This 177-nucleotide RNA was probed chemically with DMS and 2A3.
The RNA was probed in 150 mM KOAc, 10 mM MgCl2 and 150 mM bicine (pH 8.5) at 24 C.
For DMS the reverse transcriptase was MarathonRT.
Source: RMDB library OK1LIB, as collected in RNAgym.
For 2A3 the reverse transcriptase was SuperScript II with manganese.

RNA sequence: GGGAACGACUCGAGUAGAGUCGAAAAAUGUACAACAUGCCGACGGUCACCGAAGCCCCGGGAAAGGAGCGCACUUGCAGUGUCAUGAACAGCUUCACAGCGCUGGCAACACUGCUGUGACUUGUGCGGGCUGUAUGAAAUUCGUUUCAUACAGCCCAAAAGAAACAACAACAACAAC
Reactivity to DMS in 0.01 (KOAc 150mM, MgCl2 10mM, bicine 150mM(pH8.5), 24C), signal-to-noise 3, nucleotides 027 to 126: a050u010g010u050a040c190a070a050c120a050u030g000c020c020g000a110c080g020g000u000c000a020c040c060g010a090a100g000c050c020c000c030g000g000g010a090a120a120g000g010a080g030c070g000c020a060c060u020u040g000c030a000g010u000g020u040c120a180u010g020a100a070c020a070g000c000u030u030c210a110c260a070g000c090g010c070u000g000g000c080a060a070c010a010c010u000g000c000u020g020u010g020a070c100u000u030g050u010g020c220
Reactivity to 2A3 in 0.01 (KOAc 150mM, MgCl2 10mM, bicine 150mM(pH8.5), 24C), signal-to-noise 5, nucleotides 027 to 126: a010u090g030u100a040c020a090a000c020a110u060g020c020c000g030a060c040g020g010u040c030a050c080c010g010a080a030g020c010c000c020c000g010g040g040a070a100a050g080g030a070g020c090g000c030a030c030u080u120g000c010a000g010u010g010u070c100a110u050g030a160a130c000a000g050c000u220u190c120a060c070a200g090c060g020c080u020g020g010c020a000a020c040a020c020u020g010c010u010g000u000g020a020c030u100u080g030u060g100c020